[RMDB]
RNA sequence: GGGAACGACUCGAGUAGAGUCGAAAAGGUAAAAUUCUUGGAUCUAUGGAAGAUGAACUACUGCGAAAGCAUUUACCAAGGAUGUUUUCAUUAAUCAAGAACGAAAGUUAGGGGAUCGAAGAGGAUCGUUCUUUAUAUCAUUCGUGAUAUAAAGAACAAAAGAAACAACAACAACAAC
Reactivity to DMS in 0.01 (KOAc 150mM, MgCl2 10mM, bicine 150mM(pH8.5), 24C), signal-to-noise 9, nucleotides 027 to 126: g010g010u030a050a060a090a100u010u000c010u000u000g010g010a070u010c040u010a090u020g020g010a080a070g010a040u000g000a110a100c100u000a070c100u010g010c100g010a060a040a070g000c030a020u000u010u010a130c160c110a070a070g000g000a030u000g000u010u000u000u000c020a090u020u020a070a070u030c070a050a070g010a030a050c100g010a050a040a040g010u010u010a050g010g000g000g000a080u000c050g010a060a040g010a070g010g000a050u010c100
Reactivity to 2A3 in 0.01 (KOAc 150mM, MgCl2 10mM, bicine 150mM(pH8.5), 24C), signal-to-noise 9, nucleotides 027 to 126: g080g020u130a050a060a050a090u090u020c010u020u030g070g020a060u020c030u060a110u170g100g040a070a060g020a100u110g050a070a050c040u110a030c040u110g070c040g040a030a010a000g000c010a010u020u040u060a130c050c030a030a020g060g000a000u020g040u010u010u010u010c020a030u050u140a070a070u090c050a030a030g040a080a040c060g050a150a040a010g020u070u070a030g000g010g010g030a010u050c040g040a060a020g030a040g100g040a040u070c040